[RMDB]
RNA sequence: GGGAACGACUCGAGUAGAGUCGAAAACAUAUGACGCAGAGUGGAACACUCAGCGGAAACGCAUCCAAUGUCUGAAGUCUUUAAUGGGUAUAACAGUCAGUUGACCCAGAUCCCAACAGACAAUAAAAGCAAUGCAUUGAUUCGUCAAUGCAUUGCUAAAAGAAACAACAACAACAAC
Reactivity to DMS in 0.01 (KOAc 150mM, MgCl2 10mM, bicine 150mM(pH8.5), 24C), signal-to-noise 2, nucleotides 027 to 126: c050a100u000a050u010g000a110c000g020c060a070g040a010g060u010g000g020a220a110c060a050c010u000c000a030g000c030g010g030a020a050a070c170g010c050a120u010c100c090a090a100u000g000u020c000u000g000a130a090g050u000c010u000u000u000a250a180u000g000g040g010u010a030u000a010a010c010a240g000u010c200a100g000u000u000g000a010c000c000c010a030g000a110u000c020c000c000a040a170c030a000g000a000c010a020a040u040a080a050a070
Reactivity to 2A3 in 0.01 (KOAc 150mM, MgCl2 10mM, bicine 150mM(pH8.5), 24C), signal-to-noise 3, nucleotides 027 to 126: c030a030u220a080u250g080a030c050g000c050a010g020a000g010u050g030g190a190a050c010a010c080u030c000a020g020c020g010g000a030a090a010c090g020c030a040u050c060c040a100a100u070g020u010c000u010g040a070a010g010u020c040u010u050u030a060a030u020g050g000g000u060a140u060a300a030c020a040g300u270c010a000g000u140u000g020a020c010c000c000a000g010a020u010c000c000c000a000a000c000a010g000a000c000a030a040u140a060a070a010